Background:
The record gives the reactivity of an RNA of 177 nucleotides to 2A3 and DMS. The data come from the RNA Mapping Database (RMDB), library VIROID. High 2A3 reactivity points to a flexible backbone, as in loops and unpaired stretches.
RNA sequence: GGGAACGACUCGAGUAGAGUCGAAAAACGACGACAGGUACUUCGAAAGAAGAAUCCAUUCACAGUAAAUCCUCGUCAGUUUCGUCGAUGACGACAGGUAAGUUUCCCUUUCCCUCUCUGCGUUUUAGAAGGUAAAUAACUUCGGUUAUUUACCUUCAAAAGAAACAACAACAACAAC
Reactivity to 2A3 in 0.01 (KOAc 150mM, MgCl2 10mM, bicine 150mM(pH8.5), 24C), signal-to-noise 3, nucleotides 027 to 126: a010c010g030a010c020g010a020c010a070g070g000u040a060c000u000u030c010g080a110a050a050g010a010a020g010a080a030u050c010c010a060u120u140c050a070c030a070g080u140a000a040a140u010c020c000u030c020g020u010c000a030g020u030u100u080c030g030u020c010g040a030u060g030a020c010g020a030c040a030g010g030u100a110a050g020u020u030u100c000c000c020u030u020u010c030c030c000u050c010u020c020u070g070c070g050u090u060u000u010a030
Reactivity to DMS in 0.01 (KOAc 150mM, MgCl2 10mM, bicine 150mM(pH8.5), 24C), signal-to-noise 6, nucleotides 027 to 126: a080c040g010a040c050g020a060c300a100g020g010u010a110c010u010u000c010g010a120a100a120g000a020a030g000a120a130u010c010c040a110u010u000c070a090c140a110g000u010a060a070a110u000c040c040u000c030g000u000c020a060g010u010u000u000c030g010u000c020g020a110u010g000a020c010g010a090c210a030g010g000u000a050a100g010u000u000u000c020c010c010u000u000u000c010c010c010u000c060u010c050u000g010c110g010u010u000u000u010a160
DMS adducts were read by reverse transcription with MarathonRT. Values cover nucleotides 27 to 126. Values are in units of 0.01, from 0 to 300, in steps of 10.